[RMDB]
RNA sequence: GGGAACGACUCGAGUAGAGUCGAAAAUUGCGGCAGCAGAUCAGCCAGAAUCCGUUCGCCUCGCGUACCAGCGGUGCGUCACCCUUGCCGACCGGCGGCGCGAAGCCGUAGGUGGUCAACUCCUGGGUAAUACAUUGCCUUUCGAGGCAAUGUAUUAAAAAGAAACAACAACAACAAC
Reactivity to 2A3 in 0.01 (KOAc 150mM, MgCl2 10mM, bicine 150mM(pH8.5), 24C), signal-to-noise 3, nucleotides 027 to 126: u120u100g040c030g010g000c020a020g010c010a020g060a090u070c030a010g050c010c000a030g080a010a050u040c020c040g030u030u040c050g030c010c010u040c050g020c010g000u050a080c030c030a080g080c030g040g040u040g020c000g040u030c040a090c010c000c000u010u110g010c020c010g100a060c010c010g050g020c000g020g000c020g000c100g130a120a020g020c000c000g020u010a040g000g070u040g010g000u040c040a030a040c040u030c030c020u050g010g070g020
Reactivity to DMS in 0.01 (KOAc 150mM, MgCl2 10mM, bicine 150mM(pH8.5), 24C), signal-to-noise 6, nucleotides 027 to 126: u010u010g010c080g010g010c040a060g020c020a060g010a060u010c080a100g000c050c060a100g010a140a060u000c050c050g020u010u000c100g010c010c010u000c060g000c050g020u000a080c080c070a110g010c100g020g010u000g000c040g020u000c110a090c040c020c040u000u010g010c040c030g000a060c030c030g000g030c020g000g000c000g000c130g010a120a160g010c000c010g000u010a070g010g020u000g010g000u000c090a070a090c110u000c050c020u000g010g000g010
Chemical mapping of a 177-nucleotide RNA with 2A3 and DMS. The RNA was probed in 150 mM KOAc, 10 mM MgCl2 and 150 mM bicine (pH 8.5) at 24 C. 2A3 adducts were read by reverse transcription with SuperScript II with manganese. Values cover nucleotides 27 to 126. High DMS reactivity at an A or C suggests that its Watson-Crick edge is free.